Source: RMDB library RNAMAK, as collected in RNAgym.
An RNA of 207 nucleotides, treated with 2A3 and DMS and read out base by base.
For DMS, 2,647 sequencing reads were counted.
For 2A3, 4,376 sequencing reads were counted.
[RMDB]
RNA sequence: GGGAACGACUCGAGUAGAGUCGAAAAGACCCUUUCGAGGGUCAAGAUAGGGGUCCUGGUGUGGGACAUGUCGUUUAACUGAAGCCUCCACGGUUAUACGACAACAGCCGUAACAUCACCAGGACGGAGGCACCCAGCUUAGCAUAUUCGUAUGCAAGAAAAGAAUUGAGUUCGCUCAAUUCUUUUCAAAAGAAACAACAACAACAAC
Reactivity to 2A3 in 0.01 (KOAc 150mM, MgCl2 10mM, bicine 150mM(pH8.5), 24C), signal-to-noise 5, nucleotides 027 to 156: g000a000c000c000c060u000u050u050c200g110a020g000g000g000u010c020a010a020g040a030u300a100g160g050g030g000u000c000c000u000g000g000u000g010u020g050g130g070a110c250a280u220g000u000c000g000u010u040u000a000a020c000u000g020a080a010g000c000c000u000c010c000a020c000g000g000u010u000a020u000a000c010g020a010c030a070a040c050a050g220c090c120g080u130a030a030c010a040u160c010a010c000c000a000g000g000a000c000g000g000a000g000g000c000a000c000c010c010a010g080c080u130u180a020g000c010a010u030a060u120u110c180g130u070a020u050g000c010a020a050
Reactivity to DMS in 0.01 (KOAc 150mM, MgCl2 10mM, bicine 150mM(pH8.5), 24C), signal-to-noise 1, nucleotides 027 to 156: g000a050c010c010c000u000u000u000c180g010a090g000g030g020u010c020a010a030g010a180u000a060g010g010g060g020u000c010c020u000g020g020u000g020u000g010g060g030a110c080a190u000g000u000c020g040u000u000u010a010a000c000u010g010a110a150g010c050c000u000c000c030a300c070g000g010u000u000a040u000a020c000g000a050c010a060a120c110a120g020c070c050g000u000a120a060c030a070u000c030a030c030c000a050g020g020a020c030g000g050a030g020g040c020a040c010c020c030a230g000c030u000u000a190g030c020a020u000a050u000u000c290g050u000a020u000g010c000a110a300
Record summary: The RNA was probed in 150 mM KOAc, 10 mM MgCl2 and 150 mM bicine (pH 8.5) at 24 C. For 2A3 the reverse transcriptase was SuperScript II with manganese.